[RMDB]
RNA sequence: GGGAACGACUCGAGUAGAGUCGAAAAGAGAUUGUAGUGAGGUACUCGACAGGAAUUGGGAUCGCUGAUAUCGAAGAUAAAACCAUAGCAAUCGAGUCGAUCAAGUUUCCGAUCAGUCAAGAACAAAUAAAUGACUACGCUUCGGCGUAGUCAUUUAAAAAGAAACAACAACAACAAC
Reactivity to DMS in 0.01 (KOAc 150mM, MgCl2 10mM, bicine 150mM(pH8.5), 24C), signal-to-noise 1, nucleotides 027 to 126: g000a140g000a050u010u000g000u010a170g010u000g000a110g010g040u000a080c030u000c030g010a010c050a190g000g000a100a050u010u010g040g010g010a080u000c080g000c050u000g000a140u000a100u000c040g010a050a080g010a150u000a050a110a110a210c100c040a100u000a060g030c150a080a110u000c010g000a060g000u000c010g050a090u000c150a080a090g040u000u010u010c010c010g010a090u000c120a060g000u020c060a030a090g010a100a070c120a040a070a170

The record gives the reactivity of an RNA of 177 nucleotides to DMS.
Values cover nucleotides 27 to 126.
For DMS, 654 sequencing reads were counted.
It was measured as part of the RMDB library OK2TST.
DMS adducts were read by reverse transcription with MarathonRT.